Structure probing data (2A3 and DMS) for a 177-nucleotide construct.
Reactivities are given for positions 27 through 126.
The 2A3 profile rests on 3,467 reads.
The data come from the RNA Mapping Database (RMDB), library OK2TST.
For 2A3 the reverse transcriptase was SuperScript II with manganese.
The reactions ran in a buffer of 150 mM KOAc, 10 mM MgCl2 and 150 mM bicine (pH 8.5), at 24 C.

RNA sequence: GGGAACGACUCGAGUAGAGUCGAAAAACCGGUGUGCCAACUGGCAUCGCAAAAUCUACCCCUUUGUGCGGUGCAAUGCGCCCGGUCACUGGGUUAAUUCGGCGCGGAUUGAAGUUGGACGAGACGCUCACCCAUUAUUUUUCGAAAUAAUGGGUGAAAAAGAAACAACAACAACAAC
Reactivity to 2A3 in 0.01 (KOAc 150mM, MgCl2 10mM, bicine 150mM(pH8.5), 24C), signal-to-noise 3, nucleotides 027 to 126: a010c020c000g020g000u180g020u160g050c010c040a060a010c100u070g150g000c010a010u010c010g000c000a040a010a020a150u080c090u200a220c010c000c010c030u030u090u100g160u020g020c000g010g010u000g000c010a010a030u080g010c000g000c030c010c020g030g000u000c010a030c050u140g050g110g000u100u130a090a040u190u110c030g030g000c020g000c030g030g050a040u040u130g040a070a000g020u050u020g010g000a030c010g020a030g010a020c070g010c030
Reactivity to DMS in 0.01 (KOAc 150mM, MgCl2 10mM, bicine 150mM(pH8.5), 24C), signal-to-noise 9, nucleotides 027 to 126: a110c020c010g010g010u010g030u010g020c010c030a060a030c060u000g010g010c000a010u000c010g020c010a030a030a050a050u000c140u010a300c070c030c030c110u000u000u000g020u000g010c000g010g020u000g010c000a090a100u000g010c020g010c020c010c080g010g010u000c050a040c070u000g010g020g000u000u000a050a090u000u010c160g010g020c060g020c010g000g010a180u000u000g010a070a070g000u000u000g000g000a070c050g010a120g000a120c140g000c170